[RMDB]
RNA sequence: GGGAACGACUCGAGUAGAGUCGAAAACACCUUAAGCAGCUGAAGCUGCCAGCAUGAUCUGAUCUUUUGCGAUCUCUUUUUUUAUCUGAAUAAGUUGAUGGAAAUAUUGGGUUCCUAAGAUUCAGAUUUAAAGUCAAGAGUUCGCUCUUGACUUUAAAAAAGAAACAACAACAACAAC
Reactivity to DMS in 0.01 (KOAc 150mM, MgCl2 10mM, bicine 150mM(pH8.5), 24C), signal-to-noise 4, nucleotides 027 to 126: c190a130c030c020u020u030a100a210g010c000a020g000c030u020g030a160a110g000c020u000g010c010c160a080g020c200a090u050g010a050u010c010u000g000a020u000c010u020u010u000u010g010c130g010a000u000c010u020c000u000u000u000u010u020u000u020a010u010c000u010g000a080a100u050a120a130g010u040u000g010a040u010g000g000a000a010a010u010a040u040u010g000g010g010u000u000c010c000u000a020a020g010a020u020u000c000a000g000a030u000
Reactivity to 2A3 in 0.01 (KOAc 150mM, MgCl2 10mM, bicine 150mM(pH8.5), 24C), signal-to-noise 5, nucleotides 027 to 126: c080a090c010c000u070u100a080a020g000c010a000g000c000u150g150a270a020g040c020u010g030c000c020a050g060c020a100u190g000a030u040c010u010g000a010u010c000u010u100u130u040g050c100g010a030u000c030u000c000u010u030u000u000u000u000u030a020u000c010u010g160a220a130u230a300a150g140u200u100g030a020u030g010g080a010a020a010u160a070u110u180g050g000g000u000u000c000c000u000a000a000g010a030u160u150c010a000g000a000u010
The data come from the RNA Mapping Database (RMDB), libraries RFM100 and RFMREP. An RNA of 177 nucleotides, treated with DMS and 2A3 and read out base by base. Values cover nucleotides 27 to 126. For DMS the reverse transcriptase was MarathonRT. The RNA was probed in 150 mM KOAc, 10 mM MgCl2 and 150 mM bicine (pH 8.5) at 24 C.